An RNA of 177 nucleotides, treated with DMS and 2A3 and read out base by base. The 2A3 profile rests on 3,169 reads. The reactions ran in a buffer of 150 mM KOAc, 10 mM MgCl2 and 150 mM bicine (pH 8.5), at 24 C.

RNA sequence: GGGAACGACUCGAGUAGAGUCGAAAAUUGGCCUUAUCGACAGAGAGGUAAUCAGUCCAACCAACUCCUGUUGACGGAAUAUUUUUAUGAUAAGGAAACAUGCAAUAAGGAGGAACAGCACUAGUACUCUAGCUAAAUCAUUCGUGAUUUAGCUAGAAAAAGAAACAACAACAACAAC
Reactivity to DMS in 0.01 (KOAc 150mM, MgCl2 10mM, bicine 150mM(pH8.5), 24C), signal-to-noise 6, nucleotides 027 to 126: u000u000g020g020c010c010u000u000a060u000c020g010a120c210a090g010a100g000a060g000g010u000a080a100u000c080a090g010u000c060c080a080a100c060c080a100a140c050u000c030c010u000g000u000u000g000a070c090g000g010a070a100u000a020u000u000u000u010u010a060u030g000a040u010a030a040g000g000a120a050a060c110a060u000g010c060a040a060u010a070a060g000g000a060g000g000a070a080c120a050g010c080a050c090u000a080g010u010a090c140
Reactivity to 2A3 in 0.01 (KOAc 150mM, MgCl2 10mM, bicine 150mM(pH8.5), 24C), signal-to-noise 3, nucleotides 027 to 126: u030u030g090g000c000c010u050u040a100u070c040g020a020c080a100g170a000g000a020g180g000u080a040a080u030c050a010g080u000c020c010a010a010c020c020a060a080c030u000c010c010u040g000u060u030g020a040c030g030g030a060a020u100a070u110u160u020u040u050a200u250g040a030u030a030a030g060g000a050a100a030c040a020u180g010c030a000a080u120a140a000g010g020a020g010g020a020a040c030a040g050c040a040c130u040a020g090u070a050c030